Conditions: 150 mM KOAc, 10 mM MgCl2 and 150 mM bicine (pH 8.5), 24 C.
Chemical mapping of a 177-nucleotide RNA with DMS and 2A3.
DMS adducts were read by reverse transcription with MarathonRT.
For 2A3 the reverse transcriptase was SuperScript II with manganese.
RNA sequence: GGGAACGACUCGAGUAGAGUCGAAAAGAUCACCUGUUCGCAGGUGAUCAAUCUCCCACUUGAUCGAAGUCUCACAGCCUCGUUGCCCACGAGGCACGGGCCUAUUGAUCCGCUUCGGCGGAUCAAACAGAUAAAUUAGUUUCGACUAAUUUAUCUGAAAAGAAACAACAACAACAAC
Reactivity to DMS in 0.01 (KOAc 150mM, MgCl2 10mM, bicine 150mM(pH8.5), 24C), signal-to-noise 8, nucleotides 027 to 126: g000a010u000c000a000c000c000u000g010u010u010c200g030c000a010g010g020u000g000a010u000c000a030a100u010c200u000c000c000c010a140c130u010u000g010a060u000c050g000a120a100g000u000c020u000c050a170c240a140g000c030c000u010c030g010u000u010g010c050c050c050a190c190g000a130g000g020c000a020c060g010g010g000c030c110u000a020u010u000g000a010u000c000c000g020c000u000u010c180g030g010c000g010g000a000u000c010a000a030a200
Reactivity to 2A3 in 0.01 (KOAc 150mM, MgCl2 10mM, bicine 150mM(pH8.5), 24C), signal-to-noise 8, nucleotides 027 to 126: g000a000u000c000a000c000c000u010g030u040u050c250g010c110a000g010g000u000g010a000u000c000a000a000u010c000u000c000c000c010a040c050u110u250g090a150u150c080g090a120a020g090u040c020u010c060a100c040a040g010c010c000u080c060g080u130u140g080c000c010c010a080c080g010a180g010g000c000a000c010g010g010g000c010c000u040a050u040u050g000a000u000c000c010g000c010u050u070c210g120g000c000g010g000a000u000c000a000a010a000